[RMDB]
Description: The record gives the reactivity of an RNA of 177 nucleotides to 2A3 and DMS. Values cover nucleotides 27 to 126. For DMS the reverse transcriptase was MarathonRT.

RNA sequence: GGGAACGACUCGAGUAGAGUCGAAAACGUGCAGGCCAUCCAGCACGGCAUGCCGCUGGGCCGUACGCAACAGGGCCGGCCAGACGUCCAGGCAAAGCUGCAGGCGGUGCAGCGGCUGGCUGGCGAAGCUCCCAUUUUAUUUCGAUAAAAUGGGAGCAAAAGAAACAACAACAACAAC
Reactivity to 2A3 in 0.01 (KOAc 150mM, MgCl2 10mM, bicine 150mM(pH8.5), 24C), signal-to-noise 3, nucleotides 027 to 126: c010g010u010g000c010a080g120g120c010c000a030u040c020c000a050g000c010a010c020g040g040c040a050u170g010c000c000g000c010u010g000g070g020c010c000g020u040a040c050g010c010a010a030c010a070g070g070g000c000c000g020g000c020c010a120g050a220c110g050u080c010c050a080g000g000c010a060a070a020g020c010u050g020c020a120g170g110c020g020g010u080g080c000a000g010c020g000g000c010u000g030g000c020u010g000g000c010g020a040a020
Reactivity to DMS in 0.01 (KOAc 150mM, MgCl2 10mM, bicine 150mM(pH8.5), 24C), signal-to-noise 4, nucleotides 027 to 126: c040g010u000g000c020a110g000g030c010c060a080u010c050c040a110g010c030a060c050g000g010c130a120u000g020c010c010g040c020u000g010g010g010c000c010g020u000a060c080g020c040a030a040c060a100g000g010g000c010c010g010g010c030c010a090g000a130c110g000u000c040c030a140g050g000c020a050a080a080g010c020u000g010c040a210g010g020c020g010g020u010g000c010a060g010c000g000g000c000u000g000g000c060u010g020g000c020g010a090a130